RNA sequence: GGGAACGACUCGAGUAGAGUCGAAAAAAUAAUACUUUCAGGUACACAACGCGCUUAAGCAAAUUAAGCAAUCCCUAAUUUGAAUUUGUAGAACAUUCCCAGUCUCAAUUCAAAUAUCAUUUUAACAAAAAUGUUUCCCUUUCGAGGGAAACAUUUUAAAAGAAACAACAACAACAAC
Reactivity to 2A3 in 0.01 (KOAc 150mM, MgCl2 10mM, bicine 150mM(pH8.5), 24C), signal-to-noise 2, nucleotides 027 to 126: a000a000u280a080a000u080a120c060u100u060u030c030a000g030g020u100a020c020a000c000a150a080c120g010c000g040c020u000u000a030a000g000c020a130a070a300u100u090a110a010g000c000a000a070u000c010c010c000u030a020a070u010u000u000g000a000a000u010u010u180g020u300a020g000a020a020c070a080u000u080c010c010c030a000g030u000c000u010c010a020a020u010u020c020a020a020a010u070a040u060c080a080u070u030u080u150a120a100c080a020
Reactivity to DMS in 0.01 (KOAc 150mM, MgCl2 10mM, bicine 150mM(pH8.5), 24C), signal-to-noise 1, nucleotides 027 to 126: a110a010u030a040a080u000a030c080u010u020u110c270a010g000g050u030a000c080a080c060a050a050c060g000c120g000c020u000u000a060a140g000c180a040a060a130u000u000a050a030g000c030a150a030u000c060c000c040u130a050a060u000u020u000g000a010a010u000u000u060g040u010a000g010a040a030c000a030u000u000c000c010c000a160g000u000c030u000c030a070a000u000u000c000a030a040a010u000a100u060c200a150u000u000u000u030a060a100c300a020

This 177-nucleotide RNA was probed chemically with 2A3 and DMS. For 2A3 the reverse transcriptase was SuperScript II with manganese. The RNA was probed in 150 mM KOAc, 10 mM MgCl2 and 150 mM bicine (pH 8.5) at 24 C. DMS adducts were read by reverse transcription with MarathonRT. It was measured as part of the RMDB library RFM100.